[RMDB]
RNA sequence: GGGAACGACUCGAGUAGAGUCGAAAACUUUUUGCAACCAACCACGUCCAGGCUGUUUAUUUAAUACUUCCUCUUGCUAAUGAAGGUACUGGUUGGGGAUGGGUCGAGCUUUCCCAUCUCGGCAUAAGACUGCAAGAUUUGAAUGUGCCCUGGUGUCCCGAUACAGCUUUUUCGAAAGCUGUAUCGGAAAAGAAACAACAACAACAAC
Reactivity to 2A3 in 0.01 (KOAc 150mM, MgCl2 10mM, bicine 150mM(pH8.5), 24C), signal-to-noise 1, nucleotides 027 to 156: c040u300u180u040u060u100g000c030a050a000c010c000a000a000c020c000a080c100g030u050c000c010a000g010g040c000u000g110u050u230u130a140u150u290u140a140a170u150a130c050u010u060c040c000u050c010u020u000g040c010u020a050a110u190g110a060a100g030g000u070a050c060u030g000g050u000u020g090g000g000g000a020u080g060g000g050u050c060g000a030g030c060u040u160u050c060c000c000a010u030c000u000c000g030g000c020a010u090a080a020g130a060c040u040g000c010a000a000g000a010u100u210u270g150a130a080u140g030u070g040c030c000c000u030g020g010u000g010u030c000
The record gives the reactivity of an RNA of 207 nucleotides to 2A3. The 2A3 profile rests on 351 reads. Conditions: 150 mM KOAc, 10 mM MgCl2 and 150 mM bicine (pH 8.5), 24 C.